[RMDB]
Chemical mapping of a 177-nucleotide RNA with 2A3 and DMS. Conditions: 150 mM KOAc, 10 mM MgCl2 and 150 mM bicine (pH 8.5), 24 C.
RNA sequence: GGGAACGACUCGAGUAGAGUCGAAAAAGUCUGGUAGAGACUGCAAACCCAUUACGGGCGUAGUCGAUUCCUGUAGCCAGCAAGUCAGCAAACUCCAUACUGCCAUAGCGCUGAUGCGCAUCUACCCGAACGCUAUUGUGUUCGCACAAUAGCGUUCAAAAGAAACAACAACAACAAC
Reactivity to 2A3 in 0.01 (KOAc 150mM, MgCl2 10mM, bicine 150mM(pH8.5), 24C), signal-to-noise 2, nucleotides 027 to 126: a000g070u040c010u040g050g020u070a070g030a000g000a150c000u010g000c030a040a080a230c020c000c010a070u160u300a130c210g020g000g000c030g000u020a010g000u020c000g060a100u060u060c030c030u040g050u040a010g020c030c020a010g000c040a050a030g050u040c020a020g000c050a060a020a120c030u060c030c000a030u060a150c040u070g030c000c020a090u110a080g000c030g000c090u150g110a120u210g000c000g000c010a060u000c020u050a060c000c040c050
Reactivity to DMS in 0.01 (KOAc 150mM, MgCl2 10mM, bicine 150mM(pH8.5), 24C), signal-to-noise 3, nucleotides 027 to 126: a080g050u000c010u010g000g000u000a120g020a150g000a040c000u000g000c050a030a100a250c000c000c100a180u010u020a120c210g020g020g030c090g020u010a020g020u000c020g000a240u000u000c010c010u000g030u000a130g000c060c050a070g000c050a070a190g010u010c030a050g000c090a080a060a090c050u010c030c050a050u000a090c060u000g020c030c040a050u000a090g010c050g040c010u010g020a100u010g020c080g010c030a070u000c050u020a060c050c060c160
Source: RMDB library OK2TST, as collected in RNAgym. 2A3 adducts were read by reverse transcription with SuperScript II with manganese.